An RNA of 177 nucleotides, treated with 2A3 and DMS and read out base by base.
Values are in units of 0.01, from 0 to 300, in steps of 10.
The 2A3 profile rests on 15,722 reads.
For DMS, 9,513 sequencing reads were counted.

RNA sequence: GGGAACGACUCGAGUAGAGUCGAAAAAAAGAUAUGGAGCGACGGGAGGCUGUAUCAUCGACGAAGUCUAUUCGGAAACGAAUAGACAGAGAUGAUUCAGCCAUCGAUCGUCGCUCCUAAGUCAAAACUUAGUAUGUAGGUUCGCCUACAUACUAAGAAAAGAAACAACAACAACAAC
Reactivity to 2A3 in 0.01 (KOAc 150mM, MgCl2 10mM, bicine 150mM(pH8.5), 24C), signal-to-noise 4, nucleotides 027 to 126: a000a040a000g060a030u080a060u160g000g000a000g010c010g000a000c020g000g050g000a030g020g000c000u010g000u020a010u000c010a010u000c020g300a300c060g070a300a020g010u000c000u000a000u000u010c000g040g010a070a050a060c000g000a000a000u010a010g000a010c000a000g000a000g000a000u010g000a000u020u010c000a010g000c000c000a030u020c000g010a020u060c010g000u000c000g010c000u000c000c000u000a000a000g000u000c020a000a000a020a070
Reactivity to DMS in 0.01 (KOAc 150mM, MgCl2 10mM, bicine 150mM(pH8.5), 24C), signal-to-noise 5, nucleotides 027 to 126: a070a070a090g010a050u010a300u010g000g000a020g010c010g010a020c010g020g010g010a040g010g010c000u010g020u000a010u000c000a010u000c000g000a200c280g000a110a130g010u000c010u000a000u000u000c000g000g000a110a090a180c010g000a020a000u000a000g010a000c000a010g000a100g010a010u000g010a020u000u000c000a000g010c000c010a030u000c120g000a080u010c010g000u000c000g000c000u000c000c000u000a000a060g000u000c030a100a050a110a180